[RMDB]
RNA sequence: GGGAACGACUCGAGUAGAGUCGAAAACACGGCGAUUGUCGAGAUUGCCGAGGGAUUCAAACAGAUCCGUGAUACCCACGGCGGGGACAAGAUCUUCUACUACGGCGGCGGCGGACAGGGCAAUCACAACCGUCGUGAAAUUCGUUUCACGACGGUUAAAAGAAACAACAACAACAAC
Reactivity to DMS in 0.01 (KOAc 150mM, MgCl2 10mM, bicine 150mM(pH8.5), 24C), signal-to-noise 2, nucleotides 027 to 126: c160a120c010g000g010c030g020a090u000u010g060u040c120g000a110g000a050u000u010g020c000c010g000a080g000g010g000a180u010u030c070a090a110a110c240a080g000a150u050c010c020g040u010g000a120u000a130c020c000c030a150c080g030g000c050g000g000g000g010a050c100a100a010g000a070u030c040u020u000c090u020a120c060u000a020c070g050g010c100g000g000c070g020g020c000g000g000a060c080a050g000g000g010c010a040a020u050c070a080c100
Reactivity to 2A3 in 0.01 (KOAc 150mM, MgCl2 10mM, bicine 150mM(pH8.5), 24C), signal-to-noise 3, nucleotides 027 to 126: c030a000c030g000g000c020g030a020u070u000g100u110c080g060a060g020a130u020u070g030c000c000g000a090g020g030g000a040u160u000c060a080a120a090c050a130g080a070u010c010c030g040u020g060a030u130a190c000c000c000a030c000g060g000c030g000g020g030g030a050c050a090a060g020a070u030c000u070u020c000u110a110c000u080a090c070g010g010c000g000g000c020g010g010c040g010g020a030c010a030g000g000g000c040a020a060u080c000a010c030